The record gives the reactivity of an RNA of 177 nucleotides to 2A3 and DMS. Reactivities are rounded to 0.1 and cut off at 0 and 3. Values cover nucleotides 27 to 126. The reactions ran in a buffer of 150 mM KOAc, 10 mM MgCl2 and 150 mM bicine (pH 8.5), at 24 C.

[RMDB]
RNA sequence: GGGAACGACUCGAGUAGAGUCGAAAAGGAAAGGCAGCUUAGGAUAAUUAUUUCAGCUUUAUUGAGGGCAGAUUAGUUGAAGUCUGGGCGCUGCGUUUCAAUACGCGUUGUACAUGGGCCGACAAUGUCGGGUUAAACCUUUCGAGGUUUAACCCGAAAAAGAAACAACAACAACAAC
Reactivity to 2A3 in 0.01 (KOAc 150mM, MgCl2 10mM, bicine 150mM(pH8.5), 24C), signal-to-noise 2, nucleotides 027 to 126: g110g020a070a020a040g180g000c110a060g040c030u040u130a020g000g000a000u030a160a140u150u110a120u140u080u000c000a000g000c000u120u120u080a060u070u120g030a110g100g020g000c020a000g030a030u050u050a070g010u010u000g050a060a000g000u000c060u160g000g000g020c030g000c060u060g010c060g000u000u010u260c030a010a000u250a020c040g010c000g000u000u070g050u020a010c030a030u070g110g000g040c000c010g000a000c030a000a120u110g070
Reactivity to DMS in 0.01 (KOAc 150mM, MgCl2 10mM, bicine 150mM(pH8.5), 24C), signal-to-noise 3, nucleotides 027 to 126: g010g010a050a040a050g020g000c040a030g000c040u000u010a140g000g010a050u030a080a110u030u010a050u010u010u020c090a060g010c040u000u010u050a040u030u010g000a130g000g000g000c040a130g000a020u000u010a020g030u020u010g010a070a080g020u000c010u000g000g000g000c150g000c020u000g010c010g010u000u010u010c160a110a040u030a070c080g010c040g000u000u000g040u000a030c080a100u020g000g000g040c050c010g000a040c120a040a080u040g030